[RMDB]
RNA sequence: GGGAACGACUCGAGUAGAGUCGAAAAGGGAGAAGGGGUGCCACCUUAAUAGGUGGCCGCAGUGAAUAGGCCCAAGCAACUGUUUAGCAAAAACACAGGUCUCUGCUAAAGCGAAAGCUGAUGUAUACUACAAAAUAACCUUCGGGUUAUUUUGUAGAAAAGAAACAACAACAACAAC
Reactivity to DMS in 0.01 (KOAc 150mM, MgCl2 10mM, bicine 150mM(pH8.5), 24C), signal-to-noise 5, nucleotides 027 to 126: g010g010g010a120g010a100a070g000g000g010g010u010g020c000c000a010c010c000u000u000a120a110u010a080g010g020u000g000g010c010c100g020c050a030g010u000g010a070a120u010a110g020g010c020c010c060a070a130g010c050a090a110c070u000g010u000u010u000a090g030c140a050a050a050a070a060c140a070c090a080g010g000u000c040u000c090u010g000c020u000a040a130a060g000c010g000a080a080a130g010c020u010g000a100u010g010u010a090u000a180
Reactivity to 2A3 in 0.01 (KOAc 150mM, MgCl2 10mM, bicine 150mM(pH8.5), 24C), signal-to-noise 3, nucleotides 027 to 126: g030g030g000a070g030a090a060g080g010g000g040u080g000c000c000a000c000c000u100u090a180a060u160a210g000g000u000g000g000c000c000g000c010a050g030u070g050a080a040u050a120g020g000c020c030c000a030a010g030c010a010a070c020u050g040u050u100u100a050g020c030a000a050a030a080a050c050a020c030a040g040g080u020c060u000c010u090g000c010u050a120a050a000g020c000g030a090a010a010g000c020u010g010a050u060g060u040a070u040a090